Notes:
Chemical mapping of a 177-nucleotide RNA with DMS and 2A3. Reactivities are given for positions 27 through 126. The RNA was probed in 150 mM KOAc, 10 mM MgCl2 and 150 mM bicine (pH 8.5) at 24 C. DMS adducts were read by reverse transcription with MarathonRT. The 2A3 profile rests on 1,682 reads. It was measured as part of the RMDB library RFMREP.

RNA sequence: GGGAACGACUCGAGUAGAGUCGAAAAAAGCUUCAAUUCUGGCGUUACGCAUAGCUGGCUGUUAGCUCUAUUCCUUACUAGUUCACGACUAACAGUUUUUGUAACCAAAACCUGAGCUUAGCUCGGGGCUACAGUAUUCCUUCGGGAAUACUGUAGCAAAAGAAACAACAACAACAAC
Reactivity to DMS in 0.01 (KOAc 150mM, MgCl2 10mM, bicine 150mM(pH8.5), 24C), signal-to-noise 2, nucleotides 027 to 126: a060a020g030c020u000u000c220a070a170u010u020c160u000g010g030c100g000u000u000a030c040g050c190a090u000a070g020c030u000g010g000c040u000g010u000u000a000g000c080u000c020u010a100u000u000c000c020u000u000a140c280u020a130g000u000u010c160a070c080g000a060c010u000a020a010c020a030g000u000u000u000u000u000g000u000a010a030c020c120a100a070a070a250c010c000u000g000a010g010c000u000u000a130g010c000u000c000g030g010g000
Reactivity to 2A3 in 0.01 (KOAc 150mM, MgCl2 10mM, bicine 150mM(pH8.5), 24C), signal-to-noise 3, nucleotides 027 to 126: a000a000g100c150u170u060c110a190a180u210u120c050u170g100g020c090g070u040u010a020c020g010c090a110u070a130g020c000u020g060g000c000u010g010u050u010a030g040c060u030c030u080a100u090u080c010c010u050u070a140c070u040a060g170u050u100c100a040c170g020a030c030u000a010a010c010a040g000u010u020u040u070u080g030u000a000a010c020c000a000a020a030a060c000c000u000g010a000g000c040u120u090a030g010c000u000c010g030g000g000